[RMDB]
RNA sequence: GGGAACGACUCGAGUAGAGUCGAAAAGAAAAUAACGUGAGGAAGCAGAGAAAGAACUGCAAGGACACGAACCACCAAACAUCAGGAACAGCAGAAAGAAGCAGAAGGAGAUGAACCACCAAAAAAAGAUUACAUUAAACUUCGGUUUAAUGUAAUCAAAAGAAACAACAACAACAAC
Reactivity to DMS in 0.01 (KOAc 150mM, MgCl2 10mM, bicine 150mM(pH8.5), 24C), signal-to-noise 2, nucleotides 027 to 126: g030a090a070a100a100u010a090a130c030g060u000g030a050g010g020a170a170g000c020a010g010a100g000a150a160a150g030a110a070c030u010g000c040a030a160g010g000a070c030a040c020g000a050a050c070c030a050c060c000a050a050a080c100a060u010c060a040g000g000a070a070c100a040g000c040a040g020a030a050a030g020a030a040g020c030a040g010a060a050g000g010a030g020a060u000g000a050a050c050c040a070c090c070a020a020a010a030a040a050a090
Reactivity to 2A3 in 0.01 (KOAc 150mM, MgCl2 10mM, bicine 150mM(pH8.5), 24C), signal-to-noise 1, nucleotides 027 to 126: g020a010a080a000a040u170a080a020c030g010u030g010a030g070g000a090a070g000c020a010g030a020g030a110a290a000g140a080a030c000u010g000c010a000a060g070g040a000c020a000c040g000a020a030c050c020a060c030c030a070a040a040c010a050u080c030a010g000g030a020a080c010a020g040c010a000g010a050a130a000g050a060a010g010c030a000g010a040a010g060g040a030g000a010u040g010a000a000c010c000a010c000c000a010a270a000a000a020a000a000

Record summary: This 177-nucleotide RNA was probed chemically with DMS and 2A3. Reactivities are given for positions 27 through 126. Conditions: 150 mM KOAc, 10 mM MgCl2 and 150 mM bicine (pH 8.5), 24 C. For DMS, 1,193 sequencing reads were counted.